[RMDB]
RNA sequence: GGGAACGACUCGAGUAGAGUCGAAAAGAGAAUUGGCACCAUAAAGACUGGCCAGUCUCCUGGAACGUACCCCAUAAGUUGAACCAAAAUUAUAUUUAGAGAUGGUGGCUGGUCUAGGUACUGGUCAACAGAUUAACACUUUCGAGUGUUAAUCUGUAAAAGAAACAACAACAACAAC
Reactivity to 2A3 in 0.01 (KOAc 150mM, MgCl2 10mM, bicine 150mM(pH8.5), 24C), signal-to-noise 2, nucleotides 027 to 126: g070a010g030a090a110u150u050g010g000c050a030c030c000a020u130a120a120a020g050a080c050u030g030g000c000c000a010g000u000c070u000c020c020u020g000g000a040a020c040g030u120a070c010c050c000c040a030u040a030a040g150u120u140g080a030a050c030c010a060a070a070a020u230u140a200u070a090u250u180u150a070g010a000g010a040u030g050g110u050g050g000c070u060g000g030u000c020u010a010g020g020u010a010c010u010g020g000u000c000a000
Reactivity to DMS in 0.01 (KOAc 150mM, MgCl2 10mM, bicine 150mM(pH8.5), 24C), signal-to-noise 4, nucleotides 027 to 126: g000a110g000a040a060u000u010g020g000c050a120c060c030a110u010a110a080a120g000a130c140u000g000g020c000c010a040g000u000c050u000c010c050u000g020g010a050a030c070g000u000a140c020c030c010c040a090u000a070a110g000u000u010g010a050a170c130c100a030a060a040a110u000u010a130u010a300u010u000u000a080g010a090g000a060u000g010g020u000g030g020c090u000g010g010u000c010u000a020g010g000u000a030c020u000g000g010u000c030a080

An RNA of 177 nucleotides, treated with 2A3 and DMS and read out base by base. In probing experiments dimethyl sulfate is read out at A N1 and C N3, which are open when not base-paired. 2A3 adducts were read by reverse transcription with SuperScript II with manganese. Reactivities are given for positions 27 through 126. The RNA was probed in 150 mM KOAc, 10 mM MgCl2 and 150 mM bicine (pH 8.5) at 24 C. DMS adducts were read by reverse transcription with MarathonRT. 2A3 is a SHAPE reagent: it acylates the 2'-hydroxyl of flexible nucleotides of all four kinds.